RNA sequence: GGGAACGACUCGAGUAGAGUCGAAAAUUUUAGAUCCUAAGUGCAACAGGUUUGUUAGAGCAGACAGACUACAAACUAGGAACUAGAUCAGUGGGAACUCUCUGUACUAUCAGCUGAGUUUCCUAUACACCUAAACCUGCUCUAGAAAAAUAAAGCAAUAGCAUCACCUAUUCGUAGGUGAUGCUAUAAAAGAAACAACAACAACAAC
Reactivity to 2A3 in 0.01 (KOAc 150mM, MgCl2 10mM, bicine 150mM(pH8.5), 24C), signal-to-noise 3, nucleotides 027 to 156: u100u080u070u060a030g020a010u020c000c000u050a140a100g020u030g110c080a150a040c060a160g050g030u020u020u030g020u070u060a070g010a030g010c000a010g000a020c020a020g020a020c050u110a050c100a020a150a000c020u040a010g010g010a060a080c010u020a050g030a100u120c060a050g040u060g010g000g000a010a000c000u000c000u000c020u000g030u090a240c070u150a170u250c020a000g020c140u020g000a000g000u000u000u030c000c000u000a000u000a010c050a020c010c020u060a080a090a090c000c030u020g000c020u010c030u020a000g130a070a110a040a070a030u220a050a050a010g160c080a070
Reactivity to DMS in 0.01 (KOAc 150mM, MgCl2 10mM, bicine 150mM(pH8.5), 24C), signal-to-noise 1, nucleotides 027 to 156: u000u000u000u000a090g010a100u000c000c020u010a070a120g050u010g010c040a130a180c040a170g000g000u000u010u010g000u000u010a040g020a110g030c050a060g040a190c130a110g010a160c050u000a080c120a110a040a140c130u000a050g010g000a020a110c060u000a030g010a090u010c070a060g000u010g000g030g010a010a060c010u000c010u000c010u010g010u000a210c160u000a090u000c020a070g030c100u000g000a090g010u000u000u000c010c010u000a040u010a080c040a100c000c000u010a040a040a100c110c030u000g010c000u000c020u000a110g010a060a060a090a090a070u000a040a030a120g010c040a040